Structure probing data (2A3) for a 207-nucleotide construct. For 2A3, 590 sequencing reads were counted. For 2A3 the reverse transcriptase was SuperScript II with manganese. Conditions: 150 mM KOAc, 10 mM MgCl2 and 150 mM bicine (pH 8.5), 24 C.
[RMDB]
RNA sequence: GGGAACGACUCGAGUAGAGUCGAAAAGUCAUUUCGAAGAUAUUGGUCAACAGGAGCUGCAUGAUUCGCUGAUUGUCUACCAAAUAUCUUGCGGCUAAUUCUUGCUCCGCACGAACUCCUCCACCAGCAGGAAUACCCACAUAUGGUACAAUCCAGGCGUACGCUAGCUGUUCGCAGCUAGCGUACGAAAAGAAACAACAACAACAAC
Reactivity to 2A3 in 0.01 (KOAc 150mM, MgCl2 10mM, bicine 150mM(pH8.5), 24C), signal-to-noise 2, nucleotides 027 to 156: g020u000c020a050u070u110u120c100g150a020a020g010a020u020a000u000u060g010g010u090c010a000a010c000a020g050g010a010g000c040u180g050c080a080u080g070a220u240u080c070g020c000u030g030a240u030u010g030u000c020u010a030c000c000a000a150a000u060a020u000c010u000u060g030c020g000g040c020u020a050a170u100u000c070u000u020g000c010u000c010c020g150c030a130c100g040a210a070c090u070c030c010u010c010c000a050c010c000a020g000c000a010g020g020a000a030u100a060c070c070c000a100c020a020u150a030u110g030g000u040a060c020a100a000u000c000c000a010g070g000